[RMDB]
RNA sequence: GGGAACGACUCGAGUAGAGUCGAAAACCGAGGCUGGUCACCUAAACCAGAGGGAGUUACCUGUUGUUUAACAGGCGGCUGUACUGAGUUAAGUAUAUGUCUGUAUCCCCAUACCUAAACUUUGUUUCAUCCUAGAGUAGUUCGCUACUCUAGGAUGAAAAGAAACAACAACAACAAC
Reactivity to 2A3 in 0.01 (KOAc 150mM, MgCl2 10mM, bicine 150mM(pH8.5), 24C), signal-to-noise 1, nucleotides 027 to 126: c000c020g000a040g000g030c030u040g010g010u090c060a100c100c080u080a090a040a020c030c010a000g000a130g030g040g040a070g010u110u140a070c000c010u010g040u040u030g060u010u290u170a020a010c010a010g010g000c040g020g000c020u060g050u030a010c000u020g100a070g250u120u210a040a000g000u020a020u020a050u170g070u000c010u090g070u080a160u030c030c010c020c010a030u090a120c000c000u080a100a060a130c090u100u090u120g040u030u030u010
The record gives the reactivity of an RNA of 177 nucleotides to 2A3. 2A3 adducts were read by reverse transcription with SuperScript II with manganese.